An RNA of 207 nucleotides, treated with 2A3 and DMS and read out base by base. Reactivities are given for positions 27 through 156.
RNA sequence: GGGAACGACUCGAGUAGAGUCGAAAAUGCCAAAUUGAUGGAUGAGAUAAGAAACCUGAUCUGAACAGCACUGGACAGCUUUGCUCCACCAUCACCAAAAGGCCUGUGCCCAUGUGGGUUUCCUGGUGCUUUCUGUCUACUUUUAAAGGUGUGCUAAAAAUAUUUUAGCUUUCGAGCUAAAAUAUUUAAAAGAAACAACAACAACAAC
Reactivity to 2A3 in 0.01 (KOAc 150mM, MgCl2 10mM, bicine 150mM(pH8.5), 24C), signal-to-noise 2, nucleotides 027 to 156: u160g010c020c000a070a060a000u060u050g010a020u020g000g020a070u070g060a020g020a110u160a180a040g030a160a030a050c030c050u070g080a150u020c040u080g030a060a040c050a070g050c010a030c040u050g000g040a000c010a020g060c030u010u120u180g020c020u040c010c000a030c010c020a020u040c010a020c030c010a180a050a000a000g020g020c000c020u100g040u090g070c000c020c030a080u220g110u150g060g040g000u040u080u050c020c030u080g010g030u030g010c000u050u080u070c020u010g000u010c000u040a100c070u090u160u070u210a100a100a000g020g000u100g000u050g030c010u120a110a180
Reactivity to DMS in 0.01 (KOAc 150mM, MgCl2 10mM, bicine 150mM(pH8.5), 24C), signal-to-noise 2, nucleotides 027 to 156: u010g000c020c030a030a090a140u020u000g020a090u000g010g010a120u010g010a180g000a110u000a060a180g010a110a060a060c040c010u020g030a110u000c030u000g010a100a160c060a090g030c050a090c050u000g020g010a080c050a060g000c060u010u010u000g010c000u000c000c020a070c000c030a050u010c020a080c030c060a050a080a130a150g000g000c030c080u010g050u020g030c030c010c030a070u010g010u000g020g030g000u000u000u000c030c010u010g010g030u000g000c030u000u010u000c040u010g020u000c050u000a050c030u010u000u000u020a050a080a090g010g020u000g040u000g000c050u010a000a060
The 2A3 profile rests on 955 reads. In probing experiments dimethyl sulfate is read out at A N1 and C N3, which are open when not base-paired. The RNA was probed in 150 mM KOAc, 10 mM MgCl2 and 150 mM bicine (pH 8.5) at 24 C. 2A3 adducts were read by reverse transcription with SuperScript II with manganese. It was measured as part of the RMDB library OK3TST. For DMS the reverse transcriptase was MarathonRT.